Structure probing data (DMS and 2A3) for a 207-nucleotide construct.
The reactions ran in a buffer of 150 mM KOAc, 10 mM MgCl2 and 150 mM bicine (pH 8.5), at 24 C.
The DMS profile rests on 4,052 reads.
The data come from the RNA Mapping Database (RMDB), library OK3TST.
[RMDB]
RNA sequence: GGGAACGACUCGAGUAGAGUCGAAAACGAAACGUACGGGGCAUGCGAAAGGAUGGGUGAGGUGUUCAUCAGGAUGAGACAAGCACCGCCGUCCUUAAUUCUCCAUCCGAAACGUACGAAUCUGCGUACGGAAACCAUCCAAUAAGCACGUGUACCGCAUUACGCUUACCUUCGGGUAAGCGUAAUGAAAAGAAACAACAACAACAAC
Reactivity to DMS in 0.01 (KOAc 150mM, MgCl2 10mM, bicine 150mM(pH8.5), 24C), signal-to-noise 2, nucleotides 027 to 156: c060g030a110a120a130c040g020u000a030c030g040g010g030g000c040a050u000g000c020g040a170a110a240g000g010a050u000g000g050g000u010g020a060g040g000u020g030u000u000c020a080u000c120a120g000g020a110u000g000a150g020a160c170a050a060g000c050a010c070c030g020c050c110g030u000c020c000u010u000a040a040u000u010c020u010c050c010a090u000c020c040g000a080a130a100c010g010u000a000c010g010a040a210u020c110u000g000c000g040u000a050c030g020g000a070a050a100c050c010a030u000c020c080a050a100u000a070a210g030c030a070c080g030u000g000u010a140c020c010g020
Reactivity to 2A3 in 0.01 (KOAc 150mM, MgCl2 10mM, bicine 150mM(pH8.5), 24C), signal-to-noise 4, nucleotides 027 to 156: c030g040a030a000a020c050g020u120a020c030g040g020g070g000c060a020u050g010c050g130a090a050a020g010g010a010u060g110g020g010u120g100a110g000g040u060g040u080u080c060a090u050c040a070g100g010a070u110g030a040g040a100c060a040a040g040c020a020c030c030g040c030c020g000u040c000c010u000u030a050a030u100u050c020u000c020c020a050u000c010c000g060a110a080a060c010g000u010a000c000g010a040a100u070c070u160g050c020g010u000a000c010g010g000a040a090a020c030c000a040u030c010c010a010a060u080a070a030g010c010a010c070g060u110g030u080a050c000c020g010